[RMDB]
RNA sequence: GGGAACGACUCGAGUAGAGUCGAAAACUACAUAAAUUCGUUUAUGUAGCAUCGGGGACGCGCAGACUCCCCGUCAGACGGCUCUAGCCUUCCAAGCUCAGCACUCAACAGCUUUCGAGCUGUUGAAUCAUGGAAUACGGUUCGCCGUAUUCCAUGAAAAAGAAACAACAACAACAAC
Reactivity to DMS in 0.01 (KOAc 150mM, MgCl2 10mM, bicine 150mM(pH8.5), 24C), signal-to-noise 3, nucleotides 027 to 126: c000u010a010c010a010u000a010a000a040u010u010c170g010u000u010u000a000u000g000u000a010g000c090a100u000c000g010g010g010g000a030c110g020c140g010c130a120g000a120c130u000c010c000c020c000g030u000c160a080g000a120c060g010g000c010u000c050u000a080g000c010c010u000u010c020c080a080a120g020c090u000c110a060g000c090a130c190u000c010a000a010c010a020g000c000u000u000u000c140g000a000g010c000u010g010u000u010g000a030a100
Reactivity to 2A3 in 0.01 (KOAc 150mM, MgCl2 10mM, bicine 150mM(pH8.5), 24C), signal-to-noise 3, nucleotides 027 to 126: c000u000a000c000a000u020a000a010a030u060u050c130g060u050u010u010a020u000g000u000a000g020c020a070u110c010g010g020g000g000a030c080g080c010g000c180a010g090a300c030u000c020c010c010c000g010u010c020a030g020a030c010g040g030c000u020c050u100a060g000c020c030u050u010c040c050a030a000g010c030u050c090a020g000c040a030c030u010c000a010a000c000a000g030c000u020u100u170c220g090a000g000c010u010g010u000u000g000a000a030